[RMDB]
RNA sequence: GGGAACGACUCGAGUAGAGUCGAAAAGGCAUUCUGGCGCGCAUGCUGGCUAAGAUGAACUAUCUGACGUUGUGCGGCAUGUUAGCUGGUUCAAUGACUGAUCCACCGGCAUUGGCCUUUGCCAAUGGGAGUCAGGUCUCUUCGGAGACCUGACUCCAAAAGAAACAACAACAACAAC
Reactivity to 2A3 in 0.01 (KOAc 150mM, MgCl2 10mM, bicine 150mM(pH8.5), 24C), signal-to-noise 1, nucleotides 027 to 126: g070g000c000a000u040u080c030u040g090g000c000g000c000g000c020a000u000g000c030u070g070g080c000u030a030a030g040a060u080g010a090a100c060u080a100u060c000u020g040a040c050g160u130u050g100u190g070c010g000g030c000a010u000g000u010u020a010g000c000u020g000g000u050u130c080a100a020u150g100a200c030u030g010a030u030c020c060a040c080c040g100g030c020a040u000u000g040g050c000c010u090u060u270g000c040c010a020a020u070g040
Reactivity to DMS in 0.01 (KOAc 150mM, MgCl2 10mM, bicine 150mM(pH8.5), 24C), signal-to-noise 1, nucleotides 027 to 126: g010g010c000a000u000u000c050u010g010g020c010g010c200g010c010a010u010g000c010u000g000g020c000u000a150a040g000a050u000g010a090a170c150u000a040u010c060u020g010a170c250g010u010u000g000u000g000c090g030g000c030a000u000g000u000u000a300g040c030u000g000g010u020u010c120a020a040u000g000a100c030u000g010a100u000c030c050a100c100c090g020g010c030a020u040u000g000g020c000c240u000u000u020g000c010c000a020a080u000g000